[RMDB]
RNA sequence: GGGAACGACUCGAGUAGAGUCGAAAACACAUGCCAUGAUAUCGGUUAAGAACUCUUAACUCUGAUGGCUUUCGAGUUAUGUGGUGCAUUGAAGCUCUCCCUUCAAUUCAACGUACCGUUCCGUCAAUGGUUAGAAUAACUUCGGUUAUUCUAACCAAAAAGAAACAACAACAACAAC
Reactivity to 2A3 in 0.01 (KOAc 150mM, MgCl2 10mM, bicine 150mM(pH8.5), 24C), signal-to-noise 3, nucleotides 027 to 126: c060a000c020a040u150g010c010c010a030u040g110a030u080a080u300c030g000g010u000u020a010a000g040a280a210c060u030c000u300u010a000a000c000u000c050u070g080a010u000g000g000c000u040u070u030c050g010a030g000u100u030a050u130g070u120g030g040u050g020c010a030u020u030g020a020a010g000c000u010c020u050c090c020c000u000u040c030a030a030u020u050c010a030a020c020g010u020a020c020c000g010u040u010c020c010g070u080c070a060a110
Reactivity to DMS in 0.01 (KOAc 150mM, MgCl2 10mM, bicine 150mM(pH8.5), 24C), signal-to-noise 7, nucleotides 027 to 126: c140a110c170a070u010g000c000c000a020u010g010a130u000a060u010c110g010g010u000u010a010a010g010a240a150c300u010c000u000u000a010a020c010u000c070u010g000a030u000g000g000c020u000u000u000c080g000a050g000u000u000a030u000g010u000g010g020u000g010c040a030u010u010g000a030a020g000c090u000c070u000c050c070c000u000u000c080a030a060u000u000c040a020a030c040g020u000a020c030c010g010u000u000c010c000g010u010c080a090a110

Structure probing data (2A3 and DMS) for a 177-nucleotide construct. The 2A3 profile rests on 4,082 reads. For DMS, 9,833 sequencing reads were counted. Reactivities are given for positions 27 through 126. It was measured as part of the RMDB library M2PK90.